[RMDB]
RNA sequence: GGGAACGACUCGAGUAGAGUCGAAAACAGCUCACGUGGAGAAUUCAUUUCGGUUGGAGGACAUGGCAAAAUGUCUCUAAAGGAGGCCAUCAUCCUAGGGCUCCGACAUAAGAGACUUUACAAUCAAGAAUGUCUCCCAUUUCGAUGGGAGACAUUCAAAAGAAACAACAACAACAAC
Reactivity to DMS in 0.01 (KOAc 150mM, MgCl2 10mM, bicine 150mM(pH8.5), 24C), signal-to-noise 1, nucleotides 027 to 126: c190a090g050c050u010c040a010c140g000u000g010g060a030g000a150a130u000u000c020a100u010u010u000c050g030g010u000u000g000g000a090g000g040a090c060a060u020g000g000c090a050a050a050a050u000g010u000c000u010c000u000a040a130a200g000g000a030g000g010c010c020a060u000c050a110u010c100c160u000a120g000g040g030c000u000c000c000g000a090c200a060u000a110a080g000a010g000a040c010u000u000u030a050c190a160a080u000c210a070a110